[RMDB]
Description: Chemical mapping of a 177-nucleotide RNA with 2A3 and DMS. 2A3 adducts were read by reverse transcription with SuperScript II with manganese. For DMS the reverse transcriptase was MarathonRT. Reactivities are rounded to 0.1 and cut off at 0 and 3. For 2A3, 1,483 sequencing reads were counted.

RNA sequence: GGGAACGACUCGAGUAGAGUCGAAAAUGAUGCGGCAUGGUAAGCGCCAGCCAGACCGAGCCGGGUGCGGCCUGUGCGAUCUCCGUCAGGCGUGCGGCAAAAUCCGGCUCAUCUUCGUCAGGCGGAACCACUAGCGAGGAUUCGUCCUCGCUAGUGGAAAAGAAACAACAACAACAAC
Reactivity to 2A3 in 0.01 (KOAc 150mM, MgCl2 10mM, bicine 150mM(pH8.5), 24C), signal-to-noise 1, nucleotides 027 to 126: u160g030a060u090g050c060g000g070c080a090u110g060g000u120a170a100g070c020g000c060c000a000g030c020c010a010g010a000c040c060g000a010g000c030c000g030g000g000u140g020c050g000g020c000c000u070g010u080g000c040g050a160u020c080u040c120c030g030u040c020a010g000g000c100g050u120g010c030g050g000c000a050a100a020a020u030c000c000g000g000c020u010c010a010u050c020u150u120c060g060u020c040a040g020g000c000g030g020a000a020
Reactivity to DMS in 0.01 (KOAc 150mM, MgCl2 10mM, bicine 150mM(pH8.5), 24C), signal-to-noise 2, nucleotides 027 to 126: u000g010a050u030g010c060g000g000c070a090u000g010g030u010a050a130g000c130g030c050c040a140g010c050c030a020g000a080c080c090g000a040g030c010c000g000g010g000u000g040c100g000g020c000c000u010g010u020g000c000g000a060u020c130u010c160c090g000u000c050a070g030g020c000g000u010g040c020g000g010c090a080a040a160a040u010c010c000g010g010c000u000c020a030u010c050u000u010c130g000u000c000a080g020g040c020g020g000a100a280